RNA sequence: GGGAACGACUCGAGUAGAGUCGAAAAGAACAUGCCUGCAUUGUUGCUUAGAGUGGUCAGAAGACUCUGCAUUUUGUCAGCGUCUUCACCAAAUAAAACUAUGUCGUCGGCGUAUUCUAAGUCAACACGGGCGUGGUGAGUUCGCUCACCACGCCCGAAAAGAAACAACAACAACAAC
Reactivity to 2A3 in 0.01 (KOAc 150mM, MgCl2 10mM, bicine 150mM(pH8.5), 24C), signal-to-noise 1, nucleotides 027 to 126: g000a010a040c050a080u030g110c000c000u070g050c010a100u050u050g030u000u000g000c010u040u000a010g000a110g110u010g090g000u120c160a060g000a000a000g000a000c000u010c000u030g070c120a200u000u000u180u210g200u110c000a000g040c000g000u000c010u000u000c000a000c030c010a010a030a010u280a040a010a000a040c090u090a060u080g000u010c150g120u100c130g010g050c000g020u030a020u020u030c000u060a020a000g100u220c010a000a000c000a000